[RMDB]
RNA sequence: GGGAACGACUCGAGUAGAGUCGAAAAGAUAUGGACGGAUCCCAGACAUGCUAUCCCGUCGGAAACGACGGAUAGCAACAGCUGGAGUCCGUCCUAAGUCAAAAUCAGUGCCCUUCGGGGCACUGAACGUUACCAAUAAGUUCGCUUAUUGGUAACGAAAAGAAACAACAACAACAAC
Reactivity to DMS in 0.01 (KOAc 150mM, MgCl2 10mM, bicine 150mM(pH8.5), 24C), signal-to-noise 7, nucleotides 027 to 126: g000a030u000a300u000g010g010a010c010g010g010a020u000c030c000c000a010g000a100c160a260u010g010c000u000a000u000c130c040c090g020u000c000g010g000a090a070a160c010g010a010c010g000g000a000u000a000g000c010a020a030c300a170g000c010u000g000g000a070g000u000c010c000g010u000c000c000u000a000a090g000u000c030a120a060a140a150u000c000a000g020u000g000c000c000c000u000u010c250g020g010g010g000c000a000c000u010g010a000a070
Reactivity to 2A3 in 0.01 (KOAc 150mM, MgCl2 10mM, bicine 150mM(pH8.5), 24C), signal-to-noise 5, nucleotides 027 to 126: g010a010u050a020u090g000g000a000c000g010g010a020u070c020c020c020a010g040a070c110a130u190g010c000u010a020u120c100c090c110g000u000c010g010g020a060a060a010c000g000a000c000g000g010a000u000a000g020c000a000a010c050a010g080c010u000g000g010a040g030u000c000c000g000u000c010c000u000a010a010g000u010c020a000a000a010a300u050c000a000g000u000g000c000c010c000u010u050c300g060g000g000g010c000a000c000u000g000a000a000

This 177-nucleotide RNA was probed chemically with DMS and 2A3. Values cover nucleotides 27 to 126. Source: RMDB library TTRDES, as collected in RNAgym. For DMS, 13,382 sequencing reads were counted. Conditions: 150 mM KOAc, 10 mM MgCl2 and 150 mM bicine (pH 8.5), 24 C. 2A3 adducts were read by reverse transcription with SuperScript II with manganese.